[RMDB]
An RNA of 177 nucleotides, treated with DMS and 2A3 and read out base by base. For DMS the reverse transcriptase was MarathonRT. The DMS profile rests on 14,497 reads. For 2A3 the reverse transcriptase was SuperScript II with manganese.
RNA sequence: GGGAACGACUCGAGUAGAGUCGAAAAGCUGGACUCAAGCCAGCAUAGAACUGCUAACGGGAAGACAGCUGUUCGGAAGACAGUACGAUGUCAUGUAUAUGCAGGAGUGAGAGUAGCAGACGUGGAAACUCUGGAUGUCGUUCGCGACGUCCAGAGUAAAAGAAACAACAACAACAAC
Reactivity to DMS in 0.01 (KOAc 150mM, MgCl2 10mM, bicine 150mM(pH8.5), 24C), signal-to-noise 5, nucleotides 027 to 126: g000c010u000g000g000a070c050u030c120a060a130g010c000c000a050g020c000a030u000a030g000a110a070c040u000g000c010u020a070a210c090g000g000g000a110a090g010a050c160a060g010c000u000g000u000u000c020g020g050a120a130g000a020c010a010g000u010a100c200g000a140u000g000u000c010a050u020g020u010a100u010a010u010g020c000a030g000g000a060g020u000g000a070g010a070g020u010a040g010c000a050g010a100c000g000u000g000g000a060a070
Reactivity to 2A3 in 0.01 (KOAc 150mM, MgCl2 10mM, bicine 150mM(pH8.5), 24C), signal-to-noise 2, nucleotides 027 to 126: g000c000u000g010g040a030c030u000c050a040a010g020c000c000a010g000c000a000u020a010g010a020a010c010u000g030c020u060a040a050c020g000g000g060a040a010g060a000c010a010g000c000u020g010u040u010c030g030g040a020a000g020a010c000a000g040u110a010c020g090a040u010g010u000c000a020u070g100u020a020u000a010u040g000c030a000g000g040a020g010u040g000a020g000a010g000u030a010g030c000a000g000a000c000g040u070g010g040a030a010